[RMDB]
RNA sequence: GGGAACGACUCGAGUAGAGUCGAAAAUAGUAAGCUUCUAGAUACAUGUUUUGAAGCUACAGAAGCAACAUUUAACUUCUUGUUAGAUUUGGCAGGAUUGUUCAGAAUCUUUCUCCGCAAUGCCUAUAAGCACCCCCCUUCGGGGGGGUGAAAAGAAACAACAACAACAAC
Reactivity to DMS in 0.01 (KOAc 150mM, MgCl2 10mM, bicine 150mM(pH8.5), 24C), signal-to-noise 2, nucleotides 027 to 129: u020a060g000u030a120a160g030c000u000u000c030u020a020g010a040u030a150c300a120u210g020u000u230u000u000g020a070a030g020c010u000a010c020a170g030a120a070g100c030a090a060c210a060u060u000u040a010a000c040u030u040c110u100u000g020u000u000a010g000a060u070u060u020g000g060c050a000g040g000a020u020u010g040u070u000c140a070g010a060a250u020c140u000u030u000c020u080c070c100g010c150a030a000u040g050c000c000u090a010u000a100a120g020
Reactivity to 2A3 in 0.01 (KOAc 150mM, MgCl2 10mM, bicine 150mM(pH8.5), 24C), signal-to-noise 3, nucleotides 027 to 129: u110a000g040u030a080a000g020c010u000u010c040u030a040g010a140u150a170c150a090u300g130u050u110u020u020g020a030a020g010c000u000a000c060a050g090a010a000g050c080a020a040c040a070u050u100u070a050a040c040u060u060c000u060u150g000u020u000a070g020a140u070u010u080g040g000c010a020g000g000a060u130u090g010u100u110c080a020g090a090a010u090c040u030u120u010c050u070c000c000g000c000a040a030u080g020c040c000u080a080u000a100a000g070